[RMDB]
RNA sequence: GGGAACGACUCGAGUAGAGUCGAAAAUGUUCGUGAGUAACGGCACGCAUUGGUUCGUGACCCAGCGCAACUUCUACGAGCCGCAGAUUAUCACCACGGACAACACCUUCGUCUCCGGGAACUGCGACGUUACUUACCAGUUCGCUGGUAAGUAACGAAAAGAAACAACAACAACAAC
Reactivity to 2A3 in 0.01 (KOAc 150mM, MgCl2 10mM, bicine 150mM(pH8.5), 24C), signal-to-noise 4, nucleotides 027 to 126: u070g000u000u010c000g000u020g090a160g030u060a090a040c020g000g000c000a010c030g000c000a030u000u080g030g000u050u040c030g040u040g220a260c020c010c020a010g020c020g010c040a020a030c010u040u050c010u060a010c020g020a010g010c010c030g000c100a060g040a300u100u140a080u260c030a020c040c000a010c020g000g040a020c010a000a020c060a060c010c000u060u080c040g040u020c030u000c020c030g060g000g010a090a050c020u080g040c030g030a030
Reactivity to DMS in 0.01 (KOAc 150mM, MgCl2 10mM, bicine 150mM(pH8.5), 24C), signal-to-noise 4, nucleotides 027 to 126: u010g020u000u000c020g040u000g000a150g020u000a120a090c060g000g010c020a090c010g020c030a030u010u000g010g010u010u010c030g030u000g000a130c060c020c040a250g000c010g020c180a030a020c030u000u000c050u000a060c020g010a070g010c020c010g030c120a060g000a100u020u000a080u010c110a130c040c010a030c030g000g020a020c040a040a110c130a100c050c030u000u010c040g010u000c040u000c040c030g020g000g010a070a100c040u000g010c050g000a130